Chemical mapping of a 177-nucleotide RNA with DMS and 2A3.

RNA sequence: GGGAACGACUCGAGUAGAGUCGAAAAAGCAGUGCCGUGCGGCAAAGGAACGACUGUCCACCGACGUUGCCACGGAAUUGUUCGCUGAGCUUGCCGGGUGCAGCUCGAGCAUCGAGAUGACUCGGGAAAUGCUCAGCGCCUUCGGGCGCUGAGCAUUAAAAGAAACAACAACAACAAC
Reactivity to DMS in 0.01 (KOAc 150mM, MgCl2 10mM, bicine 150mM(pH8.5), 24C), signal-to-noise 4, nucleotides 027 to 126: a070g030c050a030g020u010g010c050c000g020u030g020c070g000g010c020a010a120a140g010g010a120a040c130g010a090c080u050g030u000c020c130a170c030c010g000a190c150g000u000u000g010c080c020a060c070g020g000a060a050u010u030g020u010u030c080g030c010u010g000a100g010c020u010u020g000c020c040g000g000g020u020g010c060a040g030c000u000c000g000a130g030c240a080u030c060g000a030g010a070u020g000a050c000u000c000g000g000g020a120
Reactivity to 2A3 in 0.01 (KOAc 150mM, MgCl2 10mM, bicine 150mM(pH8.5), 24C), signal-to-noise 6, nucleotides 027 to 126: a000g030c030a010g010u020g060c010c020g030u040g040c020g060g000c030a080a070a110g060g020a130a050c060g160a110c150u180g070u090c050c030a050c010c030g050a060c090g040u030u050g070c080c020a020c020g010g050a020a070u080u100g060u120u110c040g000c060u040g010a020g030c020u060u080g040c020c010g060g020g030u120g080c030a020g000c000u000c010g030a090g040c090a140u200c030g020a010g030a070u060g020a020c000u000c000g000g000g010a030

The reactions ran in a buffer of 150 mM KOAc, 10 mM MgCl2 and 150 mM bicine (pH 8.5), at 24 C.